The record gives the reactivity of an RNA of 177 nucleotides to 2A3 and DMS. It was measured as part of the RMDB library VIROID. The reactions ran in a buffer of 150 mM KOAc, 10 mM MgCl2 and 150 mM bicine (pH 8.5), at 24 C. DMS adducts were read by reverse transcription with MarathonRT. High DMS reactivity at an A or C suggests that its Watson-Crick edge is free.

[RMDB]
RNA sequence: GGGAACGACUCGAGUAGAGUCGAAAAAGGAGUAAUCCUAAACAGGGUUUUCACCCUUCCUUUAGUUUCCUUCCUCUCCUGGAGAGGUCUUCUGCCCUAGCCCGGUCUUCGGAGCUUCCUUUGGCUACAUGAUAAUGGUGUUCGCACCAUUAUCAUGAAAAGAAACAACAACAACAAC
Reactivity to 2A3 in 0.01 (KOAc 150mM, MgCl2 10mM, bicine 150mM(pH8.5), 24C), signal-to-noise 3, nucleotides 027 to 126: a000g030g000a000g010u050a040a010u050c000c000u050a020a020a040c300a070g020g030g020u080u150u280u300c210a080c000c010c000u000u020c000c010u000u020u020a010g000u020u050u000c000c000u000u060c000c010u030c010u030c030c120u130g030g090a030g000a000g060g040u010c010u120u000c020u060g050c000c000c040u020a020g000c000c000c020g090g070u050c090u120u130c080g050g010a060g060c020u060u040c020c020u100u140u090g080g030c030u050a060
Reactivity to DMS in 0.01 (KOAc 150mM, MgCl2 10mM, bicine 150mM(pH8.5), 24C), signal-to-noise 4, nucleotides 027 to 126: a010g020g000a040g010u000a030a030u010c160c000u000a020a010a030c220a020g000g000g000u000u010u020u000c210a090c010c000c010u000u000c030c020u000u010u010a010g010u000u010u000c010c000u010u000c020c010u000c030u000c010c120u020g010g000a050g000a070g000g010u010c020u010u000c070u000g000c020c020c050u000a090g000c020c020c220g020g000u010c100u010u010c080g010g010a090g000c090u000u000c030c020u010u000u010g010g010c050u010a180